[RMDB]
RNA sequence: GGGAACGACUCGAGUAGAGUCGAAAAUUUGAUUGCGUUGAUCUUUCAGUAGCUUCUACCUAUUUUUUAGUCCGCAUCUUGCAAGAUAAGACUGGCGACUUUAUGUCUACAAUUAUUACUUCCUGCCACUUAAACAACUGUUCGCAGUUGUUUAAGUAAAAGAAACAACAACAACAAC
Reactivity to DMS in 0.01 (KOAc 150mM, MgCl2 10mM, bicine 150mM(pH8.5), 24C), signal-to-noise 4, nucleotides 027 to 126: u000u000u000g000a060u010u010g020c050g010u010u000g010a080u010c020u000u010u000c070a060g020u000a060g020c070u000u010c110u010a140c200c030u000a000u000u000u020u000u010u010a090g020u000c030c030g020c060a070u000c030u000u000g020c080a060a070g000a080u010a030a050g010a070c090u000g020g000c100g000a030c030u000u000u010a040u020g000u000c010u000a060c050a030a070u010u000a050u000u000a100c160u000u000c010c010u000g000c130c130
Reactivity to 2A3 in 0.01 (KOAc 150mM, MgCl2 10mM, bicine 150mM(pH8.5), 24C), signal-to-noise 4, nucleotides 027 to 126: u080u030u100g050a040u030u120g020c020g040u020u100g030a040u010c000u010u070u030c020a070g020u050a020g050c020u060u010c020u050a070c000c010u030a140u060u100u000u000u030u080a020g010u020c010c010g000c020a000u010c010u030u070g030c050a070a040g010a110u060a050a020g030a030c020u030g030g010c030g010a020c020u050u120u070a080u140g020u020c010u020a030c020a060a020u070u040a040u130u040a120c020u050u010c000c000u010g060c020c010

The record gives the reactivity of an RNA of 177 nucleotides to DMS and 2A3. The RNA was probed in 150 mM KOAc, 10 mM MgCl2 and 150 mM bicine (pH 8.5) at 24 C. In probing experiments dimethyl sulfate is read out at A N1 and C N3, which are open when not base-paired. The data come from the RNA Mapping Database (RMDB), library 15KREP.